[RMDB]
RNA sequence: GGGAACGACUCGAGUAGAGUCGAAAAUCAUUAAGUGGGCUUUAGUAUUCCCCAAGAAAGGAUUUCUGAAAAUGAGGCUCAAGGAAGUUGUCUUCUUUCUGGUAGGCUUCCUAUCUCUUCCUCCGCCCAUACCCACGUAGUUCGCUACGUGGGUAUGAAAAGAAACAACAACAACAAC
Reactivity to 2A3 in 0.01 (KOAc 150mM, MgCl2 10mM, bicine 150mM(pH8.5), 24C), signal-to-noise 2, nucleotides 027 to 126: u050c010a020u090u140a110a030g040u060g010g000g000c010u120u050u080a030g040u080a110u080u060c030c010c010c010a050a060g090a080a040a000g120g030a090u010u120u050c040u090g100a040a050a050a080u080g010a010g040g000c020u030c070a010a000g040g000a020a040g020u030u080g060u080c050u070u020c000u030u190u030c080u090g030g050u040a040g020g020c000u020u010c020c010u060a070u020c070u000c000u050u000c010c000u000c020c030g070c000c000
Reactivity to DMS in 0.01 (KOAc 150mM, MgCl2 10mM, bicine 150mM(pH8.5), 24C), signal-to-noise 4, nucleotides 027 to 126: u010c090a060u010u000a040a100g010u000g010g010g020c070u010u000u010a040g010u000a160u010u010c020c010c010c210a100a080g000a050a080a090g010g010a100u010u000u010c050u000g000a060a050a100a110u000g000a030g010g000c070u000c060a090a080g000g010a030a030g010u000u000g010u000c060u000u000c040u010u000u000c060u010g010g000u000a200g010g000c030u000u010c010c030u000a100u010c030u000c040u000u000c010c010u010c060c080g020c090c070
The data come from the RNA Mapping Database (RMDB), library OK2TST. This 177-nucleotide RNA was probed chemically with 2A3 and DMS. For 2A3, 2,425 sequencing reads were counted. DMS adducts were read by reverse transcription with MarathonRT. The DMS profile rests on 4,180 reads.